[RMDB]
RNA sequence: GGGAACGACUCGAGUAGAGUCGAAAAGCAUAUGGUGUUGGGGUGAGAGACCAGCUAGUGAUGAUGUGGGGUGGUCUGGUGUUGACCCCCAGAGGCCAGAGAAGACUUCUGCAUGGAGGAUGGAGUGCUCAUAAGUGCCUUUCGAGGCACUUAUGAGAAAAGAAACAACAACAACAAC
Reactivity to DMS in 0.01 (KOAc 150mM, MgCl2 10mM, bicine 150mM(pH8.5), 24C), signal-to-noise 2, nucleotides 027 to 126: g030c090a090u020a100u000g020g020u000g020u010u000g010g010g000g020u000g000a240g020a030g000a020c030c000a000g000c090u000a060g020u000g010a100u020g020a060u010g040u000g030g010g010g020u010g010g000u020c020u000g000g020u000g000u000u000g000a300c300c010c010c000c020a040g000a040g010g010c030c030a040g010a160g000a090a090g010a100c060u000u000c030u000g000c080a030u020g010g000a050g000g000a120u010g000g060a060g010u000g010
Annotation:
Structure probing data (DMS) for a 177-nucleotide construct. It was measured as part of the RMDB library OK2TRN. For DMS, 2,234 sequencing reads were counted.